[RMDB]
RNA sequence: GGGAACGACUCGAGUAGAGUCGAAAAGUAAGUAUUCCUUGCUACAAAGUAACAAACAUCUACUUACAAGCAACACAUUGGAUUAAAUAGCUAAACCUAAACCUAAACCCUAAACCCUAAACCCUAAGUAGCUUUUCAACUUCGGUUGAAAAGCUACAAAAGAAACAACAACAACAAC
Reactivity to 2A3 in 0.01 (KOAc 150mM, MgCl2 10mM, bicine 150mM(pH8.5), 24C), signal-to-noise 2, nucleotides 027 to 126: g050u060a050a000g010u020a130u020u080c020c000u020u010g000c000u030a100c020a090a260a010g060u060a080a080c090a150a220a030c010a110u000c030u040a000c000u010u010a030c040a070a020g030c000a030a070c080a030c000a180u020u070g020g010a020u040u220a020a080a090u080a060g080c020u020a000a090a030c010c010u000a000a000a060c000c000u030a080a000a000c050c000c000u070a050a050a010c000c000c000u000a000a040a120c070c000c000u010a070a000
The record gives the reactivity of an RNA of 177 nucleotides to 2A3. The data come from the RNA Mapping Database (RMDB), library OK1LIB. Values cover nucleotides 27 to 126. The reactions ran in a buffer of 150 mM KOAc, 10 mM MgCl2 and 150 mM bicine (pH 8.5), at 24 C. 2A3 adducts were read by reverse transcription with SuperScript II with manganese.